[RMDB]
RNA sequence: GGGAACGACUCGAGUAGAGUCGAAAACGUUUGUUCGGAUAUCGUUUGCCGGGCCAAGCGGCGACAUCGAAGAAGCCUUACGGCGCAUCGGCUCCUGGCUGCCGAGCCAAUAGCUCGUCGAUGCGCGAUAAUUAUCCAGCUUCGGCUGGAUAAUUAUAAAAGAAACAACAACAACAAC
Reactivity to 2A3 in 0.01 (KOAc 150mM, MgCl2 10mM, bicine 150mM(pH8.5), 24C), signal-to-noise 3, nucleotides 027 to 126: c020g000u020u040u110g110u030u030c020g000g040a060u060a050u200c080g010u030u100u220g040c000c000g020g050g050c080c020a040a050g080c000g000g000c000g000a020c010a040u070c040g030a080a040g040a030a010g060c010c020u070u130a060c100g100g000c010g010c010a010u010c000g000g000c020u050c000c030u010g020g010c030u070g150c070c080g060a010g010c000c010a050a040u120a090g030c050u020c130g020u010c010g010a010u000g000c000g010c030g000
Reactivity to DMS in 0.01 (KOAc 150mM, MgCl2 10mM, bicine 150mM(pH8.5), 24C), signal-to-noise 5, nucleotides 027 to 126: c140g000u000u000u000g010u000u000c010g010g010a090u010a070u000c070g010u000u000u020g060c010c040g000g010g000c110c110a080a140g010c030g000g000c010g000a030c040a030u000c030g020a060a080g000a070a080g010c080c100u000u010a080c220g010g010c010g010c020a030u000c010g010g000c000u000c170c120u000g000g010c020u000g020c140c140g000a040g020c000c030a070a090u010a120g010c120u000c140g010u000c010g010a010u000g010c010g000c010g000

An RNA of 177 nucleotides, treated with 2A3 and DMS and read out base by base. The reactions ran in a buffer of 150 mM KOAc, 10 mM MgCl2 and 150 mM bicine (pH 8.5), at 24 C.